An RNA of 177 nucleotides, treated with DMS and 2A3 and read out base by base. For DMS the reverse transcriptase was MarathonRT. 2A3 adducts were read by reverse transcription with SuperScript II with manganese.
[RMDB]
RNA sequence: GGGAACGACUCGAGUAGAGUCGAAAAAUAGUGUUAUUCGUAACACUAUAUAUCCGAACUCAAGGAUUCGUUCCAGAGACAUGCAUGCUAGCUUGAAAGCAACUGAACAAGCGUUCGCGCUUGUUAAGUGUCGUUGUGAGUUCGCUCACAACGACACAAAAGAAACAACAACAACAAC
Reactivity to DMS in 0.01 (KOAc 150mM, MgCl2 10mM, bicine 150mM(pH8.5), 24C), signal-to-noise 1, nucleotides 027 to 126: a000u030a010g000u010g040u000u000a030u000u010c190g060u000a000a000c000a000c000u000a000u000a060u010a160u000c130c000g000a100a040c050u000c000a050a150g010g010a010u000u000c000g040u000u030c000c020a080g000a130g020a090c080a030u000g000c030a050u000g030c010u000a120g000c060u000u010g010a060a090a090g030c010a020a130c060u000g000a040a020c000a000a000g000c020g000u000u030c220g030c000g000c000u020u000g000u000u000a040a020
Reactivity to 2A3 in 0.01 (KOAc 150mM, MgCl2 10mM, bicine 150mM(pH8.5), 24C), signal-to-noise 1, nucleotides 027 to 126: a000u020a000g000u000g020u020u010a040u050u070c260g020u020a030a000c000a000c000u000a000u000a000u010a020u000c060c020g010a100a060c020u000c040a010a070g060g010a040u000u010c010g010u020u000c000c000a000g000a000g000a070c070a040u130g090c000a010u050g040c020u060a070g000c010u020u130g090a130a060a000g030c020a050a040c040u080g010a010a020c000a000a010g010c000g030u050u080c260g030c010g010c040u000u000g000u010u010a100a020